[RMDB]
Annotation: This 177-nucleotide RNA was probed chemically with 2A3 and DMS.
RNA sequence: GGGAACGACUCGAGUAGAGUCGAAAAGAGCGGCGAACGGGUGAGUAACACGUGAGUAACCUGCCCUAGGCUUUGGGAUAACGCUCGGAAACGGGCGCUAGUACCGGGUACUCAUUCUCGGCGGCAAAAUUUAUAUUUAAUUCGUUAAAUAUAAAUUAAAAGAAACAACAACAACAAC
Reactivity to 2A3 in 0.01 (KOAc 150mM, MgCl2 10mM, bicine 150mM(pH8.5), 24C), signal-to-noise 1, nucleotides 027 to 126: g060a000g010c030g050g000c020g010a050a050c070g020g000g030u040g030a040g030u070a070a020c040a010c090g050u050g020a030g020u040a070a180c010c010u030g020c010c000c030u060a090g110g000c060u150u200u190g040g000g010a020u050a060a000c000g000c000u000c000g010g000a050a080a010c010g000g000g000c000g000c020u010a010g010u020a080c000c030g000g000g010u000a020c010u010c010a010u060u010c020u000c020g050g020c000g020g000c000a040a040
Reactivity to DMS in 0.01 (KOAc 150mM, MgCl2 10mM, bicine 150mM(pH8.5), 24C), signal-to-noise 4, nucleotides 027 to 126: g000a120g010c030g010g020c030g010a070a090c140g010g000g000u000g000a070g010u000a070a080c100a070c060g000u020g000a090g020u010a080a090c020c010u010g000c020c020c040u020a090g010g010c070u020u030u030g000g000g000a150u020a040a070c000g000c000u000c000g000g000a070a080a150c010g000g010g010c000g010c050u000a020g000u030a160c130c030g000g000g010u000a030c000u010c020a030u010u010c020u000c060g010g010c020g000g000c050a030a020

High DMS reactivity at an A or C suggests that its Watson-Crick edge is free. 2A3 adducts were read by reverse transcription with SuperScript II with manganese. For DMS, 8,713 sequencing reads were counted. Reactivities are rounded to 0.1 and cut off at 0 and 3. Source: RMDB library OK1LIB, as collected in RNAgym. The reactions ran in a buffer of 150 mM KOAc, 10 mM MgCl2 and 150 mM bicine (pH 8.5), at 24 C.